The record gives the reactivity of an RNA of 177 nucleotides to 2A3 and DMS. 2A3 adducts were read by reverse transcription with SuperScript II with manganese. High DMS reactivity at an A or C suggests that its Watson-Crick edge is free.

RNA sequence: GGGAACGACUCGAGUAGAGUCGAAAACAGAUUGAGUUCGCUCAAUCUGAAAUAAAUGCUCACCAAAAGUCCAAAACCAGAGCAAGGACAGAAAAUAAAUAAAAACCAUGGUCUUCGGACCAUGGAACACAUACAAGGUGUUCGCACCUUGUAUGUGAAAAGAAACAACAACAACAAC
Reactivity to 2A3 in 0.01 (KOAc 150mM, MgCl2 10mM, bicine 150mM(pH8.5), 24C), signal-to-noise 3, nucleotides 027 to 126: c000a000g010a000u010u000g010a000g030u050u120c160g040c090u000c010a000a000u020c000u000g000a010a010a010u060a000a060a040u080g000c020u030c020a230c070c010a040a070a050a050g020u020c010c010a020a000a140a200c040c040a080g000a010g030c020a010a040g010g000a000c040a040g090a040a110a020a030u200a040a070a010u110a030a110a030a020a010c000c000a000u010g000g020u010c000u020u060c240g100g000a000c000c000a000u010g000g000a000a000
Reactivity to DMS in 0.01 (KOAc 150mM, MgCl2 10mM, bicine 150mM(pH8.5), 24C), signal-to-noise 2, nucleotides 027 to 126: c000a020g010a030u000u000g000a040g000u000u000c260g020c000u000c010a010a000u000c010u000g000a080a070a050u000a070a140a080u000g000c000u020c000a180c230c060a020a100a050a220g000u010c010c000a100a060a060a110c070c070a050g000a040g000c010a090a230g000g000a020c010a150g010a120a020a020a060u010a050a040a100u020a070a020a070a130a120c000c000a010u000g000g000u010c020u000u020c150g040g000a010c000c000a000u000g000g000a060a080